[RMDB]
RNA sequence: GGGAACGACUCGAGUAGAGUCGAAAACGACAAUCUCUAAGCGGGAGUCCCUCUCAAGAGGGAGCUCGGGGACCAGAAACGACACUCGCGCGCUUUAGGGACCGGAGAGCUGGCACACGACCGCAGGGCCCUAAAGCACAUUCGUGUGCUUUAGGGCAAAAGAAACAACAACAACAAC
Reactivity to DMS in 0.01 (KOAc 150mM, MgCl2 10mM, bicine 150mM(pH8.5), 24C), signal-to-noise 9, nucleotides 027 to 126: c100g000a100c160a090a100u020c040u000c020u020a090a120g000c030g010g000g000a170g010u000c010c000c000u000c010u020c260a120a150g010a030g010g000g000a030g010c020u000c010g010g000g000g010a140c010c020a300g000a050a080a060c040g000a050c060a110c130u020c130g020c100g000c030g000c050u000u000u010a100g010g000g000a090c020c020g010g010a090g000a060g010c010u010g010g000c110a090c080a070c050g000a170c020c000g000c030a130g010g010
Reactivity to 2A3 in 0.01 (KOAc 150mM, MgCl2 10mM, bicine 150mM(pH8.5), 24C), signal-to-noise 9, nucleotides 027 to 126: c050g100a030c050a070a130u040c020u010c020u110a140a040g020c010g010g010g020a020g050u030c000c010c000u000c010u030c080a170a090g000a010g010g000g010a010g010c010u000c010g020g000g010g020a030c010c010a040g090a050a080a010c040g070a010c020a030c110u130c040g080c020g000c000g020c100u060u070u130a080g010g010g020a040c010c010g090g070a150g010a000g080c020u050g050g000c060a020c000a010c080g040a020c010c000g020c020a030g000g080